RNA sequence: GGGAACGACUCGAGUAGAGUCGAAAAAGGGACACCUCACUCACAUUUUACCAACAGAGUGAGAGUGAGGUUAACCUCUCAUUUCUGUUGGUGAACGCAGAACUUAGAGGUUGAGAACACUGAGAACUGCGUUCAUAGUUGUGAGUGUUCUGUCCCAGUAUAUCAUAGUGUUCGCACUAUGAUAUACAAAAGAAACAACAACAACAAC
Reactivity to DMS in 0.01 (KOAc 150mM, MgCl2 10mM, bicine 150mM(pH8.5), 24C), signal-to-noise 1, nucleotides 027 to 156: a070g020g040g040a030c030a040c010c040u010c020a070c000u040c000a040c030a060u000u000u000u000a260c040c010a010a050c080a060g030a090g040u000g000a040g000a000g000u010g030a110g020g010u000u000a090a160c140c010u000c000u000c030a040u000u010u000c000u000g060u000u000g050g000u000g000a020a020c040g000c020a040g010a010a300c020u000u000a030g010a140g000g030u000u010g010a260g020a140a130c030a100c010u000g000a030g000a050a300c000u010g000c060g000u000u000c010a130u000a020g000u000u000g030u020g010a060g030u000g000u000u000c020u000g030u000c010c000c000a060
Reactivity to 2A3 in 0.01 (KOAc 150mM, MgCl2 10mM, bicine 150mM(pH8.5), 24C), signal-to-noise 8, nucleotides 027 to 156: a000g000g000g000a000c000a010c000c020u010c000a000c000u030c000a010c000a030u060u120u090u210a030c000c000a000a010c010a000g010a000g010u010g010a010g010a000g010u120g030a110g020g140u080u080a040a040c020c000u000c000u000c000a050u190u300u020c000u010g020u010u010g020g030u010g000a000a000c000g000c010a000g000a020a010c000u020u020a020g060a150g220g040u040u090g090a090g030a070a010c020a010c020u010g000a000g000a020a010c000u000g000c010g010u000u010c010a020u060a040g110u050u040g000u000g000a010g000u010g000u000u010c010u010g000u000c000c000c000a000